[RMDB]
RNA sequence: GGGAACGACUCGAGUAGAGUCGAAAAGAUAUGGAGUAUUCCCAAGAGUAGACUGUGUGUCGGAAACGACACCCAGUCGCAGAUACUUGGGAGAUACUCCUAAGUCAAACUGACCUUCGGGUCAGAACCUGUAUUUAAUCUUCGGAUUAAAUACAGGAAAAGAAACAACAACAACAAC
Reactivity to DMS in 0.01 (KOAc 150mM, MgCl2 10mM, bicine 150mM(pH8.5), 24C), signal-to-noise 4, nucleotides 027 to 126: g010a050u000a300u000g000g000a020g010u000a010u000u000c000c000c000a010a010g010a100g000u000a030g010a040c010u010g020u000g000u000g020u000c000g000g010a130a110a230c000g000a020c000a000c000c040c000a020g000u000c000g030c190a120g000a080u000a020c000u000u000g020g010g010a040g000a030u000a010c000u000c000c010u000a010a080g010u000c030a120a130a270c010u000g000a000c000c000u000u020c230g030g010g010u010c000a000g000a070a170
Reactivity to 2A3 in 0.01 (KOAc 150mM, MgCl2 10mM, bicine 150mM(pH8.5), 24C), signal-to-noise 3, nucleotides 027 to 126: g020a030u080a050u180g010g000a010g000u020a040u020u040c000c000c000a010a010g050a010g080u200a050g000a000c000u000g000u010g000u000g000u030c020g020g000a030a060a000c000g000a000c000a020c000c020c020a000g000u010c000g000c020a010g010a020u080a090c010u000u000g000g000g010a110g040a030u010a010c010u000c000c000u000a080a000g010u000c030a040a110a190c010u000g000a010c010c000u040u110c300g180g000g000u010c010a000g000a010a070
This 177-nucleotide RNA was probed chemically with DMS and 2A3.
Reactivities are given for positions 27 through 126.
High 2A3 reactivity points to a flexible backbone, as in loops and unpaired stretches.
The data come from the RNA Mapping Database (RMDB), library TTRDES.